[RMDB]
RNA sequence: GGGAACGACUCGAGUAGAGUCGAAAACGGAAUACAGUGAGUGGACGGAAUAAAUCCCCUUCCCACCUCCCCACUGUCCACUCACUGUCUUCCUAAUAGGAAAUAUAAAUCGGGGGUGGGAAGGGGACGCCCGUAUACCGUUCGCGGUAUACGGGCGAAAAGAAACAACAACAACAAC
Reactivity to 2A3 in 0.01 (KOAc 150mM, MgCl2 10mM, bicine 150mM(pH8.5), 24C), signal-to-noise 1, nucleotides 027 to 126: c010g000g050a000a000u010a030c000a000g000u000g000a000g020u000g020g060a000c000g010g020a040a040u110a300a090a120u080c030c000c000c000u000u000c000c000c000a000c000c000u030c020c130c020c050a040c000u010g010u080c000c000a000c000u000c040a000c000u000g000u010c000u000u000c000c000u030a060a130u030a000g050g090a010a070a000u170a020u070a000a210a070u220c140g000g000g000g030g000u000g000g000g000a000a000g000g000g000g000a000